The data come from the RNA Mapping Database (RMDB), library VIROID. Structure probing data (2A3) for a 207-nucleotide construct. 2A3 adducts were read by reverse transcription with SuperScript II with manganese.
RNA sequence: GGGAACGACUCGAGUAGAGUCGAAAAGACUUGGGACCCUUUUUCUUUGGAGUUGCGUCCAUCGGGGGCUUCGGGGGACGAGGCUCGUCUCCUGUGCUUCUCAAAGAAGACAGAGUCGGCCCGCCCCUCCGUCGCGACCCGAUGGACAACUGACCCGCAAAUACCACUGGUUCGCCAGUGGUAUUUGAAAAGAAACAACAACAACAAC
Reactivity to 2A3 in 0.01 (KOAc 150mM, MgCl2 10mM, bicine 150mM(pH8.5), 24C), signal-to-noise 2, nucleotides 027 to 156: g040a040c130u160u160g080g040g120a240c010c020c050u050u060u000u020u070c110u090u070u140g080g020a190g010u040u080g020c080g100u030c020c000a000u010c000g000g000g040g000g020c000u010u010c000g000g000g000g020g000a000c020g020a180g010g020c050u060c300g030u010c000u010c030c050u020g050u100g070c000u030u010c020u040c040a190a240a030g010a000a000g000a020c000a000g000a000g030u020c000g020g010c040c010c000g000c070c020c000c020u020c000c000g000u000c000g000c030g050a210c020c000c000g000a000u000g000g010a000c010a000a010c000u000g050a040c000c000c020g050
The reactions ran in a buffer of 150 mM KOAc, 10 mM MgCl2 and 150 mM bicine (pH 8.5), at 24 C.